[RMDB]
RNA sequence: GGGAACGACUCGAGUAGAGUCGAAAAGAUGGGUCCGAUGGAUUAAUGCGUCGCCUGCCAUUGGAUCCUGAUUGAUAGAUUGAUGGCGACGGUCGGAUCACUCGGUAAUUCGGUGCUCUACGAGUGAUCCGUGAUGAUAGUUAAGAAGAGCACCUAAAAAUGACGGAUACUUCGGUAUCCGUCAUUUAAAAGAAACAACAACAACAAC
Reactivity to 2A3 in 0.01 (KOAc 150mM, MgCl2 10mM, bicine 150mM(pH8.5), 24C), signal-to-noise 1, nucleotides 027 to 156: g060a010u180g000g000g000u030c000c000g030a000u030g000g020a060u300u080a190a130u290g010c050g000u010c000g000c000c000u000g010c000c000a000u000u000g000g000a000u000c000c030u040g050a080u000u140g030a070u050a170g140a190u040u150g020a030u080g030g000c000g000a000c000g000g010u030c010g010g030a000u000c000a000c030u000c000g050g090u080a010a150u180u140c030g000g000u000g000c000u000c000u010a020c000g000a000g000u000g000a000u020c000c000g000u010g010a020u000g000a030u020a080g130u250u100a090a060g040a040a000g000a010g000c000a000c020c000u050a030a030
Structure probing data (2A3) for a 207-nucleotide construct.
The 2A3 profile rests on 544 reads.
Source: RMDB library OK3TST, as collected in RNAgym.
Conditions: 150 mM KOAc, 10 mM MgCl2 and 150 mM bicine (pH 8.5), 24 C.